[RMDB]
RNA sequence: GGGAACGACUCGAGUAGAGUCGAAAAGAAAAGAUUUUAGGCAUCUAUUUUACCAUCUCAGAGGAAGAUAGCUGCAGUUGUGUAAAACAGUGAAGGAAGACUUUGAAAGAGCAGAAUCGUGAGGAAUGAUGCCAGUGCCAUUUGCUGAAAAUGAAAAGUCAUGGGAUAAUUUCGAUUAUCCCAUGACAAAAGAAACAACAACAACAAC
Reactivity to DMS in 0.01 (KOAc 150mM, MgCl2 10mM, bicine 150mM(pH8.5), 24C), signal-to-noise 1, nucleotides 027 to 156: g020a130a130a040a200g000a150u000u000u000u000a170g020g040c000a000u000c020u050a070u020u010u020u000a050c040c020a120u010c080u020c020a060g000a080g010g010a100a070g000a070u000a080g010c050u000g000c080a130g000u010u010g060u030g020u020a080a050a070a050c030a030g000u000g030a140a120g000g020a070a130g010a070c010u000u000u000g010a040a120a100g000a120g020c030a180g000a090a120u080c030g010u000g020a110g010g010a060a070u010g010a060u000g010c000c010a070g020u000g040c070c000a090u000u020u000g020c020u010g020a020a020a100a150u000g010a090a170a120a200
Reactivity to 2A3 in 0.01 (KOAc 150mM, MgCl2 10mM, bicine 150mM(pH8.5), 24C), signal-to-noise 3, nucleotides 027 to 156: g080a020a080a010a030g030a070u140u190u140u210a100g040g030c010a020u000c020u070a080u000u130u040u080a190c010c020a120u080c070u080c110a080g030a030g010g010a060a000g000a020u050a040g000c030u010g000c010a010g000u080u020g000u010g030u050a050a080a030a030c020a020g020u020g040a040a000g030g030a000a050g030a020c010u060u060u090g090a100a080a040g030a010g010c010a000g030a150a040u020c040g080u060g020a030g040g030a050a030u140g010a000u020g050c030c000a000g010u020g010c000c020a070u070u080u120g010c050u020g030a070a090a040a090u240g010a000a300a010a080